[RMDB]
RNA sequence: GGGAACGACUCGAGUAGAGUCGAAAACGGGGCUAGCGAGUGGAUGUUCCGCCUCCCCAGGGUCCCGAGUGAGGCUUAUCCCGGGGAACUCGGCCCAGUCCCGAGAUAGCCGCGUCCGAGGUUCCCAGGACUUUGCUCUUCGGAGCAAAGAAAAGAAACAACAACAACAAC
Reactivity to DMS in 0.01 (KOAc 150mM, MgCl2 10mM, bicine 150mM(pH8.5), 24C), signal-to-noise 1, nucleotides 027 to 129: c060g010g000g000g010c050u030a030g000c060g000a110g030u110g000g000a110u040g030u040u010c040c000g010c300c080u030c010c020c020c000a060g030g020g030u020c150c010c020g020a130g040u070g020a080g000g000c300u030u030a060u040c010c000c000g000g000g000g000a030a020c120u040c060g040g000c110c110c000a140g040u010c020c030c000g000a090g000a050u020a000g030c060c000g000c030g050u020c010c010g040a080g040g030u000u000c010c010c020a170g000g000a050
Reactivity to 2A3 in 0.01 (KOAc 150mM, MgCl2 10mM, bicine 150mM(pH8.5), 24C), signal-to-noise 9, nucleotides 027 to 129: c000g010g030g020g010c020u030a030g040c020g060a040g030u290g040g030a060u090g070u160u060c030c020g020c020c020u020c000c000c000c010a030g010g000g000u050c010c000c020g010a090g070u270g040a120g010g020c060u120u120a060u120c000c010c000g000g000g000g010a030a010c040u010c020g030g000c010c050c010a020g080u040c010c000c010g020a040g010a030u020a000g010c000c010g150c010g050u010c040c030g060a100g060g020u020u010c000c000c000a010g020g000a010